The record gives the reactivity of an RNA of 177 nucleotides to DMS and 2A3. The RNA was probed in 150 mM KOAc, 10 mM MgCl2 and 150 mM bicine (pH 8.5) at 24 C. The 2A3 profile rests on 31,163 reads. Reactivities are given for positions 27 through 126. For DMS the reverse transcriptase was MarathonRT.

RNA sequence: GGGAACGACUCGAGUAGAGUCGAAAAGAUAUGGAGCGUGUAAGUUCGAUAAGCCUGUCGGAAACGACAACAAGGGCUUUUGACGAAUAUCACGCUCCUAAGUCAAACAUGAGGUUCGCCUCAUGAAUCCUAUAUUGAUGUUCGCAUCAAUAUAGGAAAAAGAAACAACAACAACAAC
Reactivity to DMS in 0.01 (KOAc 150mM, MgCl2 10mM, bicine 150mM(pH8.5), 24C), signal-to-noise 9, nucleotides 027 to 126: g010a030u000a300u000g010g010a010g010c000g030u000g020u000a070a240g010u010u000c010g010a110u000a010a010g010c000c000u000g000u000c000g000g000a100a090a210c000g010a010c010a110a090c240a110a140g000g010g010c010u000u000u000u000g010a180c100g000a010a010u000a300u000c000a000c000g000c000u000c000c000u000a010a050g010u000c030a100a110a180c000a000u010g000a010g010g000u000u000c290g010c010c000u000c000a000u000g000a090a140
Reactivity to 2A3 in 0.01 (KOAc 150mM, MgCl2 10mM, bicine 150mM(pH8.5), 24C), signal-to-noise 9, nucleotides 027 to 126: g020a000u050a020u130g000g000a000g010c130g020u000g020u090a300a300g040u050u010c030g010a060u020a080a000g020c030c060u070g050u000c000g010g020a060a060a080c010g040a000c010a070a030c240a130a250g050g000g010c030u030u020u030u090g220a110c060g000a000a010u040a020u080c000a000c000g000c000u000c000c000u000a000a000g000u000c000a030a040a070c000a010u000g000a000g020g020u100u130c260g120c080c000u000c000a000u000g000a010a090